[RMDB]
RNA sequence: GGGAACGACUCGAGUAGAGUCGAAAAGAUAUGGAUCGACAGGGAGUCCGAUCGGAAACGAUUGGACGAAGAACUGUUCGAUCCUAAGUCAAAUCAGACGUGGAUGCUUCGGCAUCCACGUCUGAAACAGUAUAACGGAGUUCGCUCCGUUAUACUGAAAAGAAACAACAACAACAAC
Reactivity to DMS in 0.01 (KOAc 150mM, MgCl2 10mM, bicine 150mM(pH8.5), 24C), signal-to-noise 4, nucleotides 027 to 126: g010a030u000a300u000g000g010a010u000c010g010a030c010a010g000g000g020a090g010u000c000c000g020a010u000c000g000g010a120a090a180c000g000a010u000u000g000g010a020c010g000a050a090g000a120a170c000u000g000u000u010c010g000a000u000c000c000u000a010a060g000u000c020a070a140a170u000c010a000g000a010c000g000u000g020g000a010u000g000c000u000u020c200g020g010c010a000u000c000c000a000c000g000u000c000u000g010a020a040a120
Reactivity to 2A3 in 0.01 (KOAc 150mM, MgCl2 10mM, bicine 150mM(pH8.5), 24C), signal-to-noise 2, nucleotides 027 to 126: g040a000u070a010u150g000g000a000u010c000g010a010c000a020g000g050g010a020g000u000c000c000g010a000u020c000g010g020a070a070a020c010g010a000u010u000g030g000a000c020g000a030a010g000a000a010c010u010g070u220u060c000g000a000u020c010c000u010a060a000g010u000c020a010a000a190u030c000a000g030a010c010g000u030g000g020a010u030g000c090u180u220c300g050g000c010a000u020c000c000a010c000g010u000c010u000g010a000a000a000